[RMDB]
This 177-nucleotide RNA was probed chemically with DMS and 2A3. The RNA was probed in 150 mM KOAc, 10 mM MgCl2 and 150 mM bicine (pH 8.5) at 24 C.
RNA sequence: GGGAACGACUCGAGUAGAGUCGAAAAUACCGGGAGGAAGAGAAAUCAAUAGAGAUACCGUUAGUAAAGGCGAUCGAAAGCGGUAGAGGGCAAACCGAAUCUUUUCUGUAAAGAAAUAGAUAUGUGGCACUCCAAAGCCAUUCGUGGCUUUGGAGUGAAAAGAAACAACAACAACAAC
Reactivity to DMS in 0.01 (KOAc 150mM, MgCl2 10mM, bicine 150mM(pH8.5), 24C), signal-to-noise 2, nucleotides 027 to 126: u040a190c080c040g000g010g040a050g000g010a070a010g000a090g000a040a080a080u030c080a090a140u010a070g010a070g050a200u010a030c010c020g000u000u010a050g000u030a020a100a050g000g010c110g010a120u000c030g000a030a110a300g000c030g000g000u000a030g030a170g000g000g000c090a020a110a080c020c030g000a080a020u000c020u000u000u000u020c000u000g000u030a140a050a010g000a000a000a010u030a040g000a050u000a140u010g010u020g020g010
Reactivity to 2A3 in 0.01 (KOAc 150mM, MgCl2 10mM, bicine 150mM(pH8.5), 24C), signal-to-noise 2, nucleotides 027 to 126: u090a020c020c080g020g010g000a040g000g020a040a020g040a020g010a020a110a020u020c010a030a030u060a040g080a010g000a010u030a040c000c020g060u000u020a000g030u060a080a030a040g090g060c040g020a000u080c020g020a030a000a010g070c000g010g000u020a020g000a030g000g020g030c070a080a000a000c030c000g060a080a040u010c020u000u000u000u000c020u090g130u040a070a000a100g040a000a000a010u300a010g000a000u030a010u230g070u210g110g000
For 2A3, 732 sequencing reads were counted. It was measured as part of the RMDB library RFM100. As a SHAPE reagent, 2A3 marks flexible, mostly unpaired nucleotides at the ribose 2'-OH.